[RMDB]
RNA sequence: GGGAACGACUCGAGUAGAGUCGAAAAGAAGUGGCAGGGACAUGCCCCAGAAGCUCGUUCUAGCAACAUAUGUUUGGCUAGUUCGAGCGAUUAGUCUUGAGGAGCGUCCUCUCGCCUGUUAACGAGAGGCGCGAUACCACUUCGGUGGUAUCGCGCCAAAAGAAACAACAACAACAAC
Reactivity to 2A3 in 0.01 (KOAc 150mM, MgCl2 10mM, bicine 150mM(pH8.5), 24C), signal-to-noise 1, nucleotides 027 to 126: g000a000a000g030u230g140g000c080a000g000g000g000a090c090a230u300g110c000c000c010c000a000g000a010a000g000c000u000c000g050u060u000c000u000a000g000c000a020a080c070a070u200a090u300g130u150u200u080g000g000c000u000a000g000u000u000c000g000a000g020c000g000a000u000u030a000g110u000c060u030u080g040a120g000g000a040g080c070g010u010c000c000u000c000u210c170g000c000c000u200g090u070u240a130a000c110g000a000g000a000